Notes:
The record gives the reactivity of an RNA of 177 nucleotides to 2A3.
[RMDB]
RNA sequence: GGGAACGACUCGAGUAGAGUCGAAAAGAAAAAGAGGCAUGUUUGCAAACUGAGAAGAGGGUUACAAACGACCCCCUGGCUCAUUUCCUCUCCGCCGCAGACAAAGUGACCCCAUCUAAAAAUCACAGACGGUAAAUGCUUUCGAGCAUUUACCGUCAAAAGAAACAACAACAACAAC
Reactivity to 2A3 in 0.01 (KOAc 150mM, MgCl2 10mM, bicine 150mM(pH8.5), 24C), signal-to-noise 1, nucleotides 027 to 126: g030a000a120a000a000a000g130a120g060g000c070a050u190g040u000u090u100g000c000a000a110a090c070u040g040a000g000a060a070g000a000g000g000g020u040u000a110c300a220a300a110c130g080a080c030c000c000c000c000u020g080g000c010u020c020a000u000u030u000c000c000u000c000u040c000c110g040c000c000g050c000a040g030a060c000a000a060a000g050u060g110a040c000c000c000c000a020u110c060u090a060a180a110a070a050u120c020a040c000a140
The 2A3 profile rests on 411 reads.